Annotation
Structure probing data (DMS and 2A3) for a 207-nucleotide construct. Source: RMDB library M2RFPK, as collected in RNAgym. For 2A3 the reverse transcriptase was SuperScript II with manganese. For DMS the reverse transcriptase was MarathonRT.
[RMDB]
RNA sequence: GGGAACGACUCGAGUAGAGUCGAAAACAUCCGAUGCGGAAGUUCGUGCUUCCGUCGAACGCGAAAGUCGGACGGCGGCCAUGAGUCGCAACGCAAAGCCGCGGCAAGUGGAGUUAGCGAGAAGAGAAAAAGUCACGAGUGUUCGCACUCGUGACAAUCCCUUAUUAUCGUUCGCGAUAAUAAGGGAAAAAGAAACAACAACAACAAC
Reactivity to DMS in 0.01 (KOAc 150mM, MgCl2 10mM, bicine 150mM(pH8.5), 24C), signal-to-noise 2, nucleotides 027 to 156: c010a020u000c000c000g020a080u000g010c030g030g000a080a070g020u010u010c190g030u010g000c000u000u010c000c000g030u000c030g020a070a100c110g030c040g010a070a080a130g030u000c050g000g020a120c030g020g030c040g000g000c040c000a100u000g010a300g020u000c000g020c000a030a010c010g000c050a050a200a220g050c000c010g000c020g000g010c010a070a280g030u000g010g030a180g030u000u000a150g030c040g000a060g000a010a130g000a150g000a050a060a110a090a200g000u000c010a020c000g010a020g060u000g000u010u010c300g020c030a010c000u030c000g020u020g000a000c000a040a060
Reactivity to 2A3 in 0.01 (KOAc 150mM, MgCl2 10mM, bicine 150mM(pH8.5), 24C), signal-to-noise 2, nucleotides 027 to 156: c050a050u020c010c000g050a060u050g040c010g010g010a010a000g070u160u260c160g120u300g060c010u000u000c000c000g000u000c000g040a040a050c060g020c020g150a130a060a030g060u090c030g020g020a030c000g030g010c020g000g020c030c010a100u120g000a040g020u030c000g000c010a050a040c070g010c060a080a100a000g080c070c030g000c020g030g050c030a070a040g020u030g010g020a130g020u100u180a040g090c030g040a060g070a130a070g030a050g030a040a080a060a020a000g010u010c010a000c000g000a000g000u010g020u030u040c120g030c080a020c000u000c010g000u020g010a000c000a000a010